Description
Chemical mapping of a 207-nucleotide RNA with 2A3. 2A3 adducts were read by reverse transcription with SuperScript II with manganese. For 2A3, 749 sequencing reads were counted.
RNA sequence: GGGAACGACUCGAGUAGAGUCGAAAAGUGUAUAGGCAAGCCGACCCUCCGCCUAUACACGAAUUAAGGAGGGCGGAGAUCUUAUGCUCGCGAUCUUACGUCACGAGCGAUGGCCUGCGGCUCGUGACGUAUCUUACGCAGGCCAUAGCGAGCUACACAUACCGGCCAUGUUCGCAUGGCCGGUAUGAAAAGAAACAACAACAACAAC
Reactivity to 2A3 in 0.01 (KOAc 150mM, MgCl2 10mM, bicine 150mM(pH8.5), 24C), signal-to-noise 1, nucleotides 027 to 156: g020u000g000u000a020u020a010g010g050c040a060a070g110c030c000g160a300c040c000c000u010c000c000g010c000c000u000a000u000a000c000a000c000g000a000a040u170u110a100a000g040g000a000g000g020g000c000g000g000a080g000a020u000c010u010u190a110u300g000c000u000c000g010c000g020a080u050c020u050u200a050c020g000u020c010a000c000g000a000g050c050g030a010u040g000g000c010c000u000g010c040g010g070c000u000c040g000u050g000a000c000g000u020a020u000c020u100u080a020c000g000c000a000g000g000c000c010a050u090a000g020c030g000a000g000c000u110a020c040a000